Notes: Chemical mapping of a 177-nucleotide RNA with DMS and 2A3. For 2A3 the reverse transcriptase was SuperScript II with manganese. The RNA was probed in 150 mM KOAc, 10 mM MgCl2 and 150 mM bicine (pH 8.5) at 24 C.
[RMDB]
RNA sequence: GGGAACGACUCGAGUAGAGUCGAAAAGCAAGAUGCUUCGGCAUCUUGCAGUCGUAGCGCGAUCGACAGAAUUACAGCUAUGUCGAAGGAGGAAGAGCGCGCACAUCAUCCCUUUCGAGGGAUGAAAGCAAACAGUCUAUUUCGAUAGACUGUUUGCAAAAGAAACAACAACAACAAC
Reactivity to DMS in 0.01 (KOAc 150mM, MgCl2 10mM, bicine 150mM(pH8.5), 24C), signal-to-noise 4, nucleotides 027 to 126: g000c010a020a000g010a020u000g030c000u000u010c230g020g020c000a000u000c000u000u000g000c010a050g000u000c100g020u010a070g030c000g010c010g000a110u000c010g010a040c010a040g000a160a150u000u010a090c300a130g000c090u010a090u010g010u000c000g010a080a120g000g000a170g030g000a100a060g000a130g020c000g020c000g030c030a080c180a190u000c000a000u000c010c000c000u000u000u010c130g010a010g000g010g000a010u000g000a010a070a100
Reactivity to 2A3 in 0.01 (KOAc 150mM, MgCl2 10mM, bicine 150mM(pH8.5), 24C), signal-to-noise 3, nucleotides 027 to 126: g000c000a010a000g000a010u020g000c020u050u120c250g090g000c010a010u000c000u000u000g000c000a000g040u050c070g020u050a030g000c010g010c020g030a050u020c000g010a000c000a010g070a080a040u230u100a190c060a080g070c110u090a040u100g010u010c010g030a060a060g130g110a060g040g080a090a050g020a050g100c020g000c000g000c010a010c000a040u010c000a000u000c000c000c000u000u050u020c200g080a040g000g010g000a000u010g010a030a000a000